[RMDB]
RNA sequence: GGGAACGACUCGAGUAGAGUCGAAAAACGAACAAUUGCGAAAGCAUCUGCCAGGGACGUUUCUGUUGAUCAAGAACGAAAGUUAGGGGAUCGAAGAUGAUUAGAUACCGUUGUAGUCCUAACCAUACGACACUCUAUCAUUCGUGAUAGAGUGUCGAAAAGAAACAACAACAACAAC
Reactivity to DMS in 0.01 (KOAc 150mM, MgCl2 10mM, bicine 150mM(pH8.5), 24C), signal-to-noise 3, nucleotides 027 to 126: a080c050g000a070a120c110a050a060u030u000g010c020g020a120a090a130g010c010a100u000c050u000g010c000c050a100g000g000g010a040c020g010u000u020u010c010u010g000u040u010g000a080u000c020a050a050g010a050a080c050g000a080a080a070g010u030u000a020g000g000g010g000a090u020c000g000a120a110g000a050u020g000a070u000u010a070g010a140u000a080c150c060g020u000u010g010u000a090g020u010c010c010u020a050a050c030c070a120u030a100
Reactivity to 2A3 in 0.01 (KOAc 150mM, MgCl2 10mM, bicine 150mM(pH8.5), 24C), signal-to-noise 1, nucleotides 027 to 126: a000c050g080a020a030c100a040a180u300u230g050c000g070a070a100a000g000c000a000u000c000u020g090c070c010a050g080g000g000a000c070g000u080u010u000c120u000g030u040u090g030a080u120c040a100a020g010a030a010c030g090a090a090a000g010u050u080a100g020g000g010g000a020u040c050g010a020a090g040a100u200g040a030u060u090a040g050a050u120a060c020c000g000u000u120g050u060a000g020u000c000c000u040a040a040c000c010a010u050a110
This 177-nucleotide RNA was probed chemically with DMS and 2A3. DMS adducts were read by reverse transcription with MarathonRT. For 2A3, 677 sequencing reads were counted.